[RMDB]
RNA sequence: GGGAACGACUCGAGUAGAGUCGAAAAGAGAGACCGUCUUCGACCCGUGCUACGCCGGCAACCCCUUAGUGAACGCGUUGUGUGUCGGCGUAUUACGGCAGGAGGACCUGCAUUUGGCGUUCGCCUCACAGGAGAAUACAUUCGUGUAUUCUCCUGUAAAAGAAACAACAACAACAAC
Reactivity to 2A3 in 0.01 (KOAc 150mM, MgCl2 10mM, bicine 150mM(pH8.5), 24C), signal-to-noise 3, nucleotides 027 to 126: g100a000g010a000g030a040c040c030g050u020c020u010u010c010g050a050c000c000c010g000u000g000c000u000a000c000g000c000c010g010g000c000a040a090c010c010c000c030u070u190a120g040u180g300a190a040c100g040c060g150u090u150g060u040g010u000g000u080c000g000g000c000g000u000a000u000u010a000c000g000g000c000a020g090g050a020g020g030a050c010c020u040g010c030a170u060u050u160g040g000c030g020u050u050c080g100c040c000u030c020
Reactivity to DMS in 0.01 (KOAc 150mM, MgCl2 10mM, bicine 150mM(pH8.5), 24C), signal-to-noise 9, nucleotides 027 to 126: g000a110g000a100g000a110c100c120g000u000c020u000u000c020g000a270c300c010c010g010u000g000c100u000a010c020g020c000c000g020g010c010a020a070c030c030c030c050u010u000a100g020u010g010a060a070c120g010c090g010u000u010g020u000g010u000g010u000c000g010g010c010g000u000a010u000u000a020c020g010g010c080a070g010g000a060g010g010a050c010c050u000g010c070a150u000u010u000g010g010c050g010u000u000c050g010c020c060u000c190